An RNA of 207 nucleotides, treated with 2A3 and DMS and read out base by base. 2A3 adducts were read by reverse transcription with SuperScript II with manganese. High DMS reactivity at an A or C suggests that its Watson-Crick edge is free. It was measured as part of the RMDB library M2RFOK.
RNA sequence: GGGAACGACUCGAGUAGAGUCGAAAACGCAGAGCUGCAGCGCGGCGCUCUGGAGGCCUUGCCCCGCGCACUGCUCUUUACAUGGCCCGACGUGAGGGCACUUCGCGGGCAGUGCUGCGGCCUCGUGAAACUGCCCCUAAGUUCGCUUAGGGGCAAAGACCAAAAUAAGAUUCGUCUUAUUUUGGUCAAAAGAAACAACAACAACAAC
Reactivity to 2A3 in 0.01 (KOAc 150mM, MgCl2 10mM, bicine 150mM(pH8.5), 24C), signal-to-noise 5, nucleotides 027 to 156: c030g030c030a000g010a030g000c050u100g010c030a040g050c030g030c050g170g000c030g020c040u030c040u060g070g030a030g010g030c000c020u050u120g010c020c010c000c010g000c000g000c040a000c010u010g010c000u020c010u060u100u130a090c080a080u130g080g020c000c030c020g080a110c080g090u090g040a110g010g020g010c030a060c020u060u060c030g020c040g050g000g000c000a020g020u010g010c010u020g000c000g000g000c010c000u010c000g010u010g010a090a060a020c060u030g000c000c000c000c000u010a000a010g020u040u090c100g050c120u000u000a000g000g000g010g000c000a000a000a000
Reactivity to DMS in 0.01 (KOAc 150mM, MgCl2 10mM, bicine 150mM(pH8.5), 24C), signal-to-noise 2, nucleotides 027 to 156: c020g000c030a060g000a040g020c020u010g030c040a150g000c100g060c030g020g020c080g010c040u020c020u010g010g010a090g010g000c020c060u010u000g010c060c030c000c040g030c110g000c000a060c000u010g010c010u000c030u010u000u000a090c080a130u000g010g010c040c000c020g000a200c110g040u010g000a160g030g010g030c010a030c020u000u000c020g000c270g010g020g000c030a050g000u010g020c030u000g020c020g020g020c010c010u000c020g060u000g000a090a070a090c080u000g010c020c000c010c010u050a020a030g010u000u000c290g020c020u000u000a020g020g020g020g010c000a000a010a030